Structure probing data (DMS) for a 177-nucleotide construct. The RNA was probed in 150 mM KOAc, 10 mM MgCl2 and 150 mM bicine (pH 8.5) at 24 C.
[RMDB]
RNA sequence: GGGAACGACUCGAGUAGAGUCGAAAACAACAGGGAGGUUGGUGGUGGACGAGCCACUCGCCAACCGGGUCAGGUCCGGAAGGAAGCAGCCCUAACGAGCCAGGCAGGGGUCGCCGUGCCAGUACAACGUUUGGAAGCGAUUCGUCGCUUCCAAACGAAAAGAAACAACAACAACAAC
Reactivity to DMS in 0.01 (KOAc 150mM, MgCl2 10mM, bicine 150mM(pH8.5), 24C), signal-to-noise 1, nucleotides 027 to 126: c150a070a180c070a080g010g000g010a140g000g000u000u000g070g020u000g010g020u000g000g010a240c300g050a180g030c010c010a000c030u000c010g000c010c010a020a050c000c000g000g010g000u010c020a300g020g000u000c040c030g010g010a150a060g010g000a050a010g000c030a300g000c040c010c030u000a060a090c100g000a120g060c060c010a050g010g010c100a050g040g000g010g000u020c130g000c050c000g000u000g010c020c050a100g040u010a100c140a100a210